Chemical mapping of a 177-nucleotide RNA with DMS and 2A3. Source: RMDB library TTRDES, as collected in RNAgym. For DMS the reverse transcriptase was MarathonRT. High DMS reactivity at an A or C suggests that its Watson-Crick edge is free. For DMS, 8,116 sequencing reads were counted.
RNA sequence: GGGAACGACUCGAGUAGAGUCGAAAAGAUAUGGAAGAGCCAAAUGGGAGAUGGUCGGUCGGAAACGACCGGACCAUCGACGAUCAUUCGGCUCUUCCUAAGUCAAAGUGAUGCUUCGGCAUCACAACACAUAAGCCUUGUUCGCAAGGCUUAUGUGAAAAGAAACAACAACAACAAC
Reactivity to DMS in 0.01 (KOAc 150mM, MgCl2 10mM, bicine 150mM(pH8.5), 24C), signal-to-noise 5, nucleotides 027 to 126: g000a040u000a300u010g000g010a020a010g010a030g010c010c010a040a020a020u000g000g010g000a050g010a010u000g000g020u000c000g010g010u000c000g000g000a120a130a220c010g010a020c010c000g040g020a020c000c000a000u000c010g000a040c300g010a060u020c010a010u000u000c050g010g010c010u000c000u000u000c000c010u000a000a080g000u000c060a110a060a130g010u000g010a010u000g000c000u000u010c240g020g010c000a000u010c000a000c010a140a220
Reactivity to 2A3 in 0.01 (KOAc 150mM, MgCl2 10mM, bicine 150mM(pH8.5), 24C), signal-to-noise 3, nucleotides 027 to 126: g020a030u050a040u140g000g010a000a000g000a010g020c000c000a010a020a010u020g010g000g010a070g000a000u000g020g000u000c010g010g000u010c010g030g030a100a070a030c020g010a000c000c040g020g050a030c000c000a000u000c000g000a010c000g010a030u030c000a000u000u030c030g010g030c000u010c000u000u000c000c000u010a010a000g000u000c020a050a070a080g000u000g000a010u010g000c030u060u090c300g190g000c020a000u010c000a010c010a000a000